This 177-nucleotide RNA was probed chemically with 2A3.
The data come from the RNA Mapping Database (RMDB), library OK1LIB.
The 2A3 profile rests on 385 reads.
The RNA was probed in 150 mM KOAc, 10 mM MgCl2 and 150 mM bicine (pH 8.5) at 24 C.
Reactivities are given for positions 27 through 126.
For 2A3 the reverse transcriptase was SuperScript II with manganese.
[RMDB]
RNA sequence: GGGAACGACUCGAGUAGAGUCGAAAACCGGACGUCGGGACGCACCAGGAAGAAAGAUGUCCGACGCACGGCGCGGUUAGAUGGGUAAAAACGAGGCCAGAAGAUCGGCCCUGGCGCCCGAUCACGGGAGGAUUCCCGACUUCGGUCGGGAAUCCUCAAAAGAAACAACAACAACAAC
Reactivity to 2A3 in 0.01 (KOAc 150mM, MgCl2 10mM, bicine 150mM(pH8.5), 24C), signal-to-noise 1, nucleotides 027 to 126: c030c000g000g050a060c000g000u000c040g000g150g000a270c080g040c040a110c010c000a000g000g100a090a090g020a130a050a000g300a070u170g050u030c000c000g000a000c000g080c030a060c030g000g000c140g000c000g030g130u020u020a080g000a220u220g100g030g170u260a000a260a000a000a000c040g000a080g000g140c000c000a040g110a050a000g060a060u000c000g040g000c000c000c000u090g000g000c000g000c000c030c000g000a000u100c000a000c000g100g010